The record gives the reactivity of an RNA of 177 nucleotides to DMS and 2A3. The reactions ran in a buffer of 150 mM KOAc, 10 mM MgCl2 and 150 mM bicine (pH 8.5), at 24 C. For DMS the reverse transcriptase was MarathonRT. It was measured as part of the RMDB library OK1LIB. The DMS profile rests on 1,247 reads. 2A3 is a SHAPE reagent: it acylates the 2'-hydroxyl of flexible nucleotides of all four kinds.

RNA sequence: GGGAACGACUCGAGUAGAGUCGAAAACAAAACUGACCACCUAUGAGGUCAUACAUCGUCAUAGCAAAACAAAACAAAACUGACCAGCUAUGAGGUCAUACAUCGUCAUAGCAAACAAAACAACAAAAAUUAUGAUCGUGUUCGCACGAUCAUAAUUAAAAGAAACAACAACAACAAC
Reactivity to DMS in 0.01 (KOAc 150mM, MgCl2 10mM, bicine 150mM(pH8.5), 24C), signal-to-noise 2, nucleotides 027 to 126: c150a220a090a250a110c300u000g000a000c070c000a050c130c050u060a050u000g000a000g000g020u000c020a050u020a120c290a140u070c010g000u000c040a000u060a020g000c300a040a190a000a040c230a170a140a000a110c220a050a100a140a140c300u000g040a110c000c000a210g020c000u000a030u000g000a000g000g000u000c000a110u020a020c260a020u060c040g030u000c000a020u000a000g000c000a230a020a020c140a110a070a050a160c170a000a080c060a000a000a150
Reactivity to 2A3 in 0.01 (KOAc 150mM, MgCl2 10mM, bicine 150mM(pH8.5), 24C), signal-to-noise 6, nucleotides 027 to 126: c010a000a080a000a080c090u080g000a000c010c000a020c010c000u030a030u020g020a010g010g050u010c010a030u230a080c070a130u110c120g090u000c010a000u050a010g080c100a000a050a010a090c060a050a100a040a040c080a040a130a050a160c110u050g000a000c000c000a000g000c000u000a020u000g000a000g010g000u010c010a010u160a140c070a100u160c100g040u000c000a000u010a010g030c000a010a030a000c030a010a090a010a000c060a010a000c020a030a110a020